[RMDB]
RNA sequence: GGGAACGACUCGAGUAGAGUCGAAAAACAGAAUGCUGCCAGUUGAAACACAACGCGACUUCGCCAAACGAAUUCAGGCGCAGAAAGUGGUUGAACUCCCUUCUAGCCACUCAGCCCAUCUAUCACAAGAAUGCAAUAGUUUCGACUAUUGCAUUCUAAAAGAAACAACAACAACAAC
Reactivity to 2A3 in 0.01 (KOAc 150mM, MgCl2 10mM, bicine 150mM(pH8.5), 24C), signal-to-noise 2, nucleotides 027 to 126: a000c040a010g070a180a060u040g000c050u130g000c040c000a030g030u050u070g090a100a060a010c080a010c000a090a030c010g000c030g060a030c020u040u030c020g020c030c040a070a080a090c070g050a010a020u130u080c030a050g010g010c020g010c020a010g050a020a060a000g040u060g060g050u010u040g030a060a050c010u050c030c020c000u020u010c040u030a010g000c020c000a010c000u000c000a030g000c000c000c000a040u070c060u080a120u100c140a040c010a080
Reactivity to DMS in 0.01 (KOAc 150mM, MgCl2 10mM, bicine 150mM(pH8.5), 24C), signal-to-noise 4, nucleotides 027 to 126: a110c110a080g000a100a110u000g000c040u000g020c040c000a090g020u010u000g000a060a140a110c120a110c060a050a080c080g010c060g020a100c090u000u000c030g020c040c120a040a050a160c090g010a050a050u010u010c100a160g000g000c050g020c040a050g030a040a090a060g010u000g000g000u000u000g010a070a110c160u000c050c010c000u010u000c060u000a100g000c000c000a020c030u000c070a070g010c010c000c020a100u000c080u030a070u010c100a080c170a090
Chemical mapping of a 177-nucleotide RNA with 2A3 and DMS. 2A3 adducts were read by reverse transcription with SuperScript II with manganese. The DMS profile rests on 2,661 reads.